[RMDB]
RNA sequence: GGGAACGACUCGAGUAGAGUCGAAAAUCAUGCUAUCACCAGCUAACUGGGUCUCGAUCAGUUAGUGGUGAGCGAAAGUUCACCUAGUGUCAAUGAUCGAGACGUUGACGCUAUCGUGAUAGCAUGCCUAGACGUUACUAUUCGUAGUAACGUCUAGAAAAGAAACAACAACAACAAC
Reactivity to 2A3 in 0.01 (KOAc 150mM, MgCl2 10mM, bicine 150mM(pH8.5), 24C), signal-to-noise 9, nucleotides 027 to 126: u100c000a000u000g000c000u000a000u010c000a000c010c010a000g000c010u020a140a140c030u050g080g030g080u000c010u010c020g020a020u010c000a010g090u040u180a060g050u050g060g000u000g000a000g000c000g040a100a030a010g000u010u000c000a000c000c010u030a020g080u040g140u230c090a080a090u030g000a030u030c000g010a000g000a010c000g060u000u020g030a020c040g000c000u010a020u130c050g000u000g000a000u000a000g010c000a000u000g000c000
Reactivity to DMS in 0.01 (KOAc 150mM, MgCl2 10mM, bicine 150mM(pH8.5), 24C), signal-to-noise 9, nucleotides 027 to 126: u010c010a000u000g010c000u000a000u000c000a010c000c270a030g010c000u000a090a150c080u010g000g000g010u000c020u000c030g000a030u000c000a030g010u000u010a080g020u000g010g010u000g010a010g010c000g000a100a080a140g010u000u000c000a000c000c000u000a050g010u010g010u010c150a110a080u000g000a030u000c020g000a040g000a010c010g000u000u000g000a200c220g000c000u000a050u000c210g010u000g000a010u000a000g000c000a000u000g000c290